Record summary: Structure probing data (2A3 and DMS) for a 207-nucleotide construct. In probing experiments dimethyl sulfate is read out at A N1 and C N3, which are open when not base-paired. Values cover nucleotides 27 to 156. The data come from the RNA Mapping Database (RMDB), library OK3TST. Conditions: 150 mM KOAc, 10 mM MgCl2 and 150 mM bicine (pH 8.5), 24 C. For 2A3, 1,134 sequencing reads were counted.

RNA sequence: GGGAACGACUCGAGUAGAGUCGAAAAACUCACAUUGCCUUUGAUGUGGCCUGGCAUAAAAUUUGGUCCAUAAUGAGCAACAGACACCAACUCUGUCUAGCUCAAGCUUCAACACUGCAUGUUAUUGGCAGGUUGAAAUGCAGUUGCUAGGUGGCUGACCCUCCAUAGAGUUCGCUCUAUGGAGGGUAAAAGAAACAACAACAACAAC
Reactivity to 2A3 in 0.01 (KOAc 150mM, MgCl2 10mM, bicine 150mM(pH8.5), 24C), signal-to-noise 3, nucleotides 027 to 156: a000c070u090c020a060c050a070u090u110g010c000c020u090u040u120g140a050u040g050u050g050g000c000c000u010g060g000c070a120u250a060a200a020a060u190u150u220g060g000u070c030c000a030u120a100a090u100g040a010g000c030a030a060c020a070g000a000c040a030c150c090a110a140c050u070c040u030g000u000c030u030a030g000c000u000c040a000a030g000c000u040u000c000a080a080c300a170c130u020g000c010a070u140g050u300u300a260u250u230g050g010c000a000g040g000u020u000g000a000a000a010u100g020c010a020g030u070u040g010c000u030a000g080g000u040g000g030c000u000g040
Reactivity to DMS in 0.01 (KOAc 150mM, MgCl2 10mM, bicine 150mM(pH8.5), 24C), signal-to-noise 1, nucleotides 027 to 156: a110c030u000c020a100c210a120u010u000g000c030c050u010u020u020g010a110u020g010u010g040g000c010c010u000g020g100c070a110u000a070a040a090a160u000u000u000g020g070u000c020c110a030u000a030a150u000g000a020g020c000a060a130c090a080g010a060c040a080c020c060a090a220c090u010c040u020g000u010c000u000a240g000c010u000c050a030a120g020c010u000u000c020a020a060c010a070c050u000g000c000a140u010g020u000u000a120u060u000g030g040c010a020g050g040u000u020g020a020a010a060u000g030c010a130g000u000u000g030c020u020a140g010g000u000g020g010c000u000g010